About this RNA:
An RNA of 177 nucleotides, treated with DMS and read out base by base. The RNA was probed in 150 mM KOAc, 10 mM MgCl2 and 150 mM bicine (pH 8.5) at 24 C.
RNA sequence: GGGAACGACUCGAGUAGAGUCGAAAAGAUAUGGACAACGUACCUACUAUGUCACGCAGCAACAGCGUGGAUUCGGAAACGAAUUGCACGACAUGCUGGUGACAUAGUAGGUACGUUGUCCUAAGUCGGUCAGUAUUAUCUUCGGAUAAUACUGACCAAAAGAAACAACAACAACAAC
Reactivity to DMS in 0.01 (KOAc 150mM, MgCl2 10mM, bicine 150mM(pH8.5), 24C), signal-to-noise 2, nucleotides 027 to 126: g010a110u000a300u000g010g000a010c000a010a010c000g020u000a000c000c000u000a000c000u000a010u000g000u000c000a010c000g030c010a000g000c000a050a150c300a240g000c010g040u000g000g000a000u000u000c000g000g010a100a120a220c000g010a030a010u000u010g010c010a010c010g020a030c140a230u000g020c000u000g010g000u000g010a000c000a000u000a000g040u000a000g000g000u000a000c000g010u000u000g000u000c010c010u000a000a040g020u010c090